[RMDB]
RNA sequence: GGGAACGACUCGAGUAGAGUCGAAAACUCGUUCACGGUUAUGUCUGUCUCUGGCAGAGCAGACUGUCAGGAGGAAGAGGUCACCAUCUUCACGAAGCCAAAGCCAAAUUCCGCCUUGUCCUGUAAAAUAUAUGGCCCGUUUCGACGGGCCAUAUAUAAAAGAAACAACAACAACAAC
Reactivity to 2A3 in 0.01 (KOAc 150mM, MgCl2 10mM, bicine 150mM(pH8.5), 24C), signal-to-noise 1, nucleotides 027 to 126: c000u020c010g040u070u070c040a030c080g000g060u070u080a110u160g060u000c030u000g050u000c000u000c020u020g190g000c000a000g000a020g020c070a030g030a060c000u000g050u040c040a030g000g090a050g030g040a030a000g060a040g130g020u060c050a040c080c010a050u030c010u140u120c000a000c060g040a020a000g000c060c030a090a030a000g020c000c000a060a020a000u060u000c000c010g000c000c000u000u030g060u150c050c000u070g000u120a000a170a050
Reactivity to DMS in 0.01 (KOAc 150mM, MgCl2 10mM, bicine 150mM(pH8.5), 24C), signal-to-noise 2, nucleotides 027 to 126: c020u030c020g020u010u030c020a040c030g010g000u000u010a030u010g000u000c010u000g020u000c020u000c030u000g000g050c010a070g030a060g000c020a060g000a160c030u000g000u020c010a020g000g010a100g010g000a140a070g000a100g000g000u030c070a040c080c040a040u000c000u010u000c050a090c030g000a110a090g000c020c060a050a230a270g000c080c080a040a180a170u030u000c040c040g000c000c030u000u000g000u000c000c000u000g000u000a030a090a010